An RNA of 177 nucleotides, treated with 2A3 and DMS and read out base by base. Reactivities are rounded to 0.1 and cut off at 0 and 3. The data come from the RNA Mapping Database (RMDB), library OK1LIB. For DMS the reverse transcriptase was MarathonRT. For 2A3 the reverse transcriptase was SuperScript II with manganese. The 2A3 profile rests on 1,353 reads. The DMS profile rests on 1,244 reads.
RNA sequence: GGGAACGACUCGAGUAGAGUCGAAAACUAGACAAUUUGAAGUUACGUAUAACAACGUAGAUAUUUACAGUGACUAUGUCAUUGUACGUCCUUUAUAUAUGUCAAUUUGUGCUGCCGAUCAAAGAUAUCGUACUUGCAACUUCGGUUGCAAGUACGAAAAAGAAACAACAACAACAAC
Reactivity to 2A3 in 0.01 (KOAc 150mM, MgCl2 10mM, bicine 150mM(pH8.5), 24C), signal-to-noise 3, nucleotides 027 to 126: c050u090a050g050a020c020a030a070u040u060u150g020a020a050g000u060u140a040c000g010u030a060u010a060a060c080a000a000c040g020u000a020g090a140u150a100u140u190u130a040c080a060g000u050g160a030c010u100a050u240g000u030c020a000u000u020g000u030a010c000g050u070c000c000u110u040u000a070u000a020u010a010u120g040u030c030a080a100u050u070u080g170u110g030c060u040g030c000c010g030a090u070c110a010a160a000g130a080u100a030
Reactivity to DMS in 0.01 (KOAc 150mM, MgCl2 10mM, bicine 150mM(pH8.5), 24C), signal-to-noise 2, nucleotides 027 to 126: c170u000a090g000a000c000a000a210u000u000u030g020a000a020g030u070u030a000c000g030u000a040u000a040a270c170a050a000c060g000u000a060g000a100u070a000u010u040u010a070c150a070g040u000g010a040c020u090a090u030g000u000c050a140u000u000g000u000a000c080g000u000c300c000u000u060u000a130u000a000u000a100u030g020u010c010a100a130u010u000u050g090u000g030c010u010g000c090c030g060a110u060c190a170a050a090g000a150u000a040